[RMDB]
RNA sequence: GGGAACGACUCGAGUAGAGUCGAAAAGCUGCCCGCUGUCCAGCUCGAGGACUCCGGCGAGUACUUGUGUGAAAUUGACGAUGAGUCGGCCUCCUUCACUGUCACCGUCACAGGUGUGGGCCCAGCCCGGCUGGGCUGAGUUCGCUCAGCCCAGCCGAAAAGAAACAACAACAACAAC
Reactivity to 2A3 in 0.01 (KOAc 150mM, MgCl2 10mM, bicine 150mM(pH8.5), 24C), signal-to-noise 1, nucleotides 027 to 126: g000c060u050g000c080c000c000g000c050u100g080u000c040c000a040g010c110u040c040g040a070g080g080a070c000u020c010c060g090g030c090g000a000g010u080a030c050u070u070g000u050g010u010g230a110a060a230u130u140g040a020c020g020a050u150g020a000g060u030c000g000g000c040c040u010c030c010u040u160c140a100c040u030g030u100c030a010c090c050g100u130c020a000c030a160g050g030u020g000u040g020g060g000c020c060c000a040g060c040c010
Reactivity to DMS in 0.01 (KOAc 150mM, MgCl2 10mM, bicine 150mM(pH8.5), 24C), signal-to-noise 1, nucleotides 027 to 126: g020c120u000g010c080c030c020g010c060u000g010u000c060c040a150g010c010u010c040g010a140g000g010a040c020u030c050c040g020g010c070g000a090g040u000a070c020u000u000g020u020g010u000g000a050a090a110u000u000g000a050c000g020a120u020g020a100g010u000c020g000g010c080c020u000c050c060u010u010c080a080c040u000g010u000c060a050c120c060g010u000c100a110c090a080g010g010u000g000u000g000g020g000c070c030c010a090g010c060c090
Structure probing data (2A3 and DMS) for a 177-nucleotide construct. It was measured as part of the RMDB library OK2TRN. For 2A3 the reverse transcriptase was SuperScript II with manganese. High DMS reactivity at an A or C suggests that its Watson-Crick edge is free. For DMS, 1,524 sequencing reads were counted.